[RMDB]
RNA sequence: GGGAACGACUCGAGUAGAGUCGAAAACUUUGGUGAUGCAUUUUUUAACCUGUUCAGUUAUUCAUCCCUCUCUGAUGAAUAGCAUCCAUCCUCCUAGAGAGAUGGCGGGCCAGGCCAGCGGAGCCAGUGGAGCCUAGGGCCCAGUUUCCUUGGAGACGAUGAUAAUAUUGUUCGCAAUAUUAUCAUCAAAAGAAACAACAACAACAAC
Reactivity to 2A3 in 0.01 (KOAc 150mM, MgCl2 10mM, bicine 150mM(pH8.5), 24C), signal-to-noise 4, nucleotides 027 to 156: c040u100u080u160g040g020u050g030a050u070g020c050a130u030u040u020u060u090u300a090a100c030c010u050g090u130u130c070a070g000u030u010a010u000u010c000a010u020c020c030c030u090c030u010c080u090g010a010u000g000a010a000u010a030g010c020a040u050c040c010a050u050c010c020u020c020c020u110a040g040a020g000a000g000a160u040g040g110c090g040g000g000c000c000a010g000g020c010c000a020g020c060g080g050a060g090c070c030a050g040u090g050g060a050g000c020c020u060a110g050g000g040c010c010c000a000g010u000u010u010c000c000u010u030g020g000a050g010a020c070
Reactivity to DMS in 0.01 (KOAc 150mM, MgCl2 10mM, bicine 150mM(pH8.5), 24C), signal-to-noise 1, nucleotides 027 to 156: c070u010u010u010g030g000u050g030a150u010g020c030a010u000u000u000u000u000u000a080a120c060c060u000g030u010u000c060a200g020u000u000a020u010u000c030a050u010c020c070c130u010c070u000c050u010g020a020u010g000a020a020u020a100g010c030a300u000c020c000a050u000c030c040u000c040c080u020a060g010a100g000a030g000a020u010g010g000c100g000g020g000c020c010a140g010g000c000c030a200g020c030g030g000a300g000c030c030a120g000u000g020g020a180g030c020c010u000a090g040g000g000c050c020c010a080g000u000u000u000c010c030u020u010g040g030a210g010a080c160